This 177-nucleotide RNA was probed chemically with DMS and 2A3.

[RMDB]
RNA sequence: GGGAACGACUCGAGUAGAGUCGAAAAAUCGAGGGGGAAACUGGCGUGUGGUGUGAACUGCCACCCCUCUCUGCGCAUUGAGGGCAUGAUGGGAGGGGACGUGGAGGCGUUGACGGAACAGGUCCAGUGUAAAGAGUCGUUUCGACGACUCUUUACAAAAAGAAACAACAACAACAAC
Reactivity to DMS in 0.01 (KOAc 150mM, MgCl2 10mM, bicine 150mM(pH8.5), 24C), signal-to-noise 3, nucleotides 027 to 126: a060u000c070g010a080g000g000g000g000g000a130a100a100c110u000g000g000c040g020u000g010u010g010g010u020g030u020g010a070a050c090u020g000c010c000a120c040c010c010c010u000c000u000c000u000g020c160g000c060a140u020u010g000a200g020g020g020c070a080u010g000a090u000g000g000g010a050g010g010g020g010a080c110g020u010g000g010a110g010g010c050g000u010u010g000a050c080g000g000a100a030c090a060g000g010u000c030c050a040g020
Reactivity to 2A3 in 0.01 (KOAc 150mM, MgCl2 10mM, bicine 150mM(pH8.5), 24C), signal-to-noise 1, nucleotides 027 to 126: a000u160c080g000a100g000g000g040g010g000a060a050a030c010u010g000g030c080g080u030g000u030g030g050u030g000u010g110a030a000c050u070g000c020c000a070c010c000c010c000u000c000u000c000u020g020c020g000c020a090u100u220g090a190g000g170g000c040a040u190g000a060u160g060g030g020a040g000g000g000g000a000c030g040u130g040g120a100g000g000c020g020u020u060g010a010c010g030g000a020a030c010a040g020g060u120c010c030a060g020
Notes
The RNA was probed in 150 mM KOAc, 10 mM MgCl2 and 150 mM bicine (pH 8.5) at 24 C. For 2A3 the reverse transcriptase was SuperScript II with manganese. For DMS the reverse transcriptase was MarathonRT.